[RMDB]
RNA sequence: GGGAACGACUCGAGUAGAGUCGAAAAUACGCCUGGCUCAAACUGGCGGCCGGUGGAGCGGCCCUUGUUCUGUGGAGUCUCGGGGAGCCCGGCACGCAGCCGGGGGCCCCGGCCCCGGGCCCGGCCAAUCCAAAGAUAGAUUCGUCUAUCUUUGGAUAAAAGAAACAACAACAACAAC
Reactivity to 2A3 in 0.01 (KOAc 150mM, MgCl2 10mM, bicine 150mM(pH8.5), 24C), signal-to-noise 2, nucleotides 027 to 126: u190a040c060g000c000c010u010g020g010c000u020c030a070a090a080c020u050g060g020c050g020g000c130c000g050g020u200g120g110a110g150c040g010g000c000c010c010u040u050g040u010u070c110u120g080u240g060g040a280g120u060c170u140c180g040g000g020g010a050g080c000c060c010g000g080c070a060c080g190c070a080g000c040c010g030g050g050g180g000c000c010c040c000g010g000c000c000c000c020g010g020g010c030c030c060g010g000c020c010a050
The record gives the reactivity of an RNA of 177 nucleotides to 2A3. The RNA was probed in 150 mM KOAc, 10 mM MgCl2 and 150 mM bicine (pH 8.5) at 24 C. For 2A3, 881 sequencing reads were counted. 2A3 adducts were read by reverse transcription with SuperScript II with manganese.